[RMDB]
RNA sequence: GGGAACGACUCGAGUAGAGUCGAAAAGAUACGGCGGAUAGUCCGAAACGAGCUUUGUUGCAUUGACUGGUUGAAGAAAACGUGCAGUCAAGCGAAGUAGGUAUCAGUCGUAUAAAUAAAUAAAGAAGGGUUUUCAUAUGUUCGCAUAUGAAAACCCAAAAGAAACAACAACAACAAC
Reactivity to 2A3 in 0.01 (KOAc 150mM, MgCl2 10mM, bicine 150mM(pH8.5), 24C), signal-to-noise 1, nucleotides 027 to 126: g160a000u000a000c000g020g010c020g000g000a000u030a070g150u040c050c010g000a000a000a000c020g020a010g110c000u280u100u000g110u100u000g060c000a040u160u010g120a180c060u090g250g240u100u070g190a280a050g020a030a000a050a000c050g000u020g000c000a000g010u060c000a010a000g060c000g030a050a000g000u000a000g000g000u030a000u000c000a010g000u050c000g000u000a000u000a000a000a000u000a000a000a000u060a000a050a000g190a030a130